This 177-nucleotide RNA was probed chemically with 2A3 and DMS. High DMS reactivity at an A or C suggests that its Watson-Crick edge is free. Source: RMDB library OK2TRN, as collected in RNAgym. For DMS, 24,739 sequencing reads were counted. Conditions: 150 mM KOAc, 10 mM MgCl2 and 150 mM bicine (pH 8.5), 24 C.

RNA sequence: GGGAACGACUCGAGUAGAGUCGAAAAUAAAGAGGUAUACACAAACUGGAAGCGGGAUAUAAAAUGAAAUUUCAAUCAUGAUGCAGUUGUAUACAUGUUCCUGUAAAGGCAAGGACCAUACUGCACCCAAUACCAUUGAUUUCGAUCAAUGGUAUUGAAAAGAAACAACAACAACAAC
Reactivity to 2A3 in 0.01 (KOAc 150mM, MgCl2 10mM, bicine 150mM(pH8.5), 24C), signal-to-noise 9, nucleotides 027 to 126: u180a010a060a010g080a020g020g040u040a030u080a060c040a010c020a040a200a050c050u050g040g030a060a040g050c070g030g030g070a030u110a010u070a190a110a040a060u090g070a090a070a060u150u220u080c050a050a070u070c030a070u100g060a030u040g030c010a000g020u070u050g040u090a050u020a060c030a030u060g010u030u040c000c000u020g060u110a130a140a020g100g000c050a030a040g010g010a010c000c010a010u040a060c010u010g010c010a010c010c020
Reactivity to DMS in 0.01 (KOAc 150mM, MgCl2 10mM, bicine 150mM(pH8.5), 24C), signal-to-noise 9, nucleotides 027 to 126: u010a060a090a110g010a100g010g010u000a030u010a060c050a100c080a090a090a110c090u010g000g010a070a080g020c070g000g010g010a090u000a080u010a050a050a080a070u000g010a040a060a130u010u000u010c120a070a080u010c070a050u010g010a050u000g000c010a020g000u000u000g010u000a030u000a050c080a050u000g000u000u000c010c010u000g000u010a050a070a080g010g020c090a060a050g000g010a060c090c040a030u000a040c020u000g000c020a040c040c040